[RMDB]
RNA sequence: GGGAACGACUCGAGUAGAGUCGAAAACAACAGCGUAAUCGCGUCUUGACGUGAUCUAGUUAGCAAUGUCUGUAUGCUAACUCAAUUGUGCGUAGCGCACAAUACGCUGUUCUACAGACAUUGAUACGAAAUUGAUUAAUUUCGAUUGGUCAAUUUCAAAAGAAACAACAACAACAAC
Reactivity to DMS in 0.01 (KOAc 150mM, MgCl2 10mM, bicine 150mM(pH8.5), 24C), signal-to-noise 8, nucleotides 027 to 126: c110a050a000c010a000g000c010g010u010a100a020u000c000g010c000g010u000c070u040u030g010a020c000g020u010g000a010u000c300u010a020g010u000u000a000g000c010a010a070u020g000u010c010u000g000u000a050u000g000c000u000a000a000c000u010c220a080a040u000u000g000u000g010c000g020u040a170g010c110g020c000a000c000a010a010u000a010c010g010c000u000g010u000u000c150u010a000c000a010g000a020c000a140u050u020g000a100u050a100c150
Reactivity to 2A3 in 0.01 (KOAc 150mM, MgCl2 10mM, bicine 150mM(pH8.5), 24C), signal-to-noise 9, nucleotides 027 to 126: c030a000a000c000a000g000c000g010u010a010a000u010c000g000c000g040u020c090u140u300g170a030c000g000u010g000a000u000c020u040a000g000u000u000a000g000c010a020a060u190g000u000c000u000g000u000a010u010g000c000u000a000a000c010u010c060a030a110u010u000g000u010g000c020g150u220a090g190c040g000c170a000c000a000a000u030a010c000g000c000u000g000u000u000c000u010a000c000a000g010a000c010a010u040u280g100a110u120a090c110